An RNA of 177 nucleotides, treated with 2A3 and read out base by base. For 2A3 the reverse transcriptase was SuperScript II with manganese.
RNA sequence: GGGAACGACUCGAGUAGAGUCGAAAAGUGUCGCGUUAAGUCGCUAAACGAGCGAAACCCUUGUCGUUAGUUGCCAGCACGUAAUGGUGGGGACUCUAGCGAGACUGCCGGUGUUAAACCGGAGGAAGCAGCGGAAUUACUUCGGUAAUUCCGCUGCAAAAGAAACAACAACAACAAC
Reactivity to 2A3 in 0.01 (KOAc 150mM, MgCl2 10mM, bicine 150mM(pH8.5), 24C), signal-to-noise 2, nucleotides 027 to 126: g170u070g000u130c080g000c000g040u030u100a160a150g110u080c000g020c140u040a050a050a050c060g030a000g000c040g000a000a020a060c000c000c000u020u120g070u000c000g000u000u130a020g040u070u290g050c000c000a020g010c030a000c010g000u000a030a030u000g000g000u010g010g000g000g000a040c000u000c000u000a010g000c020g000a000g000a010c030u060g060c000c000g030g000u050g090u240u300a160a170a160c000c050g000g000a030g000g000a140a030
Record summary:
The 2A3 profile rests on 681 reads.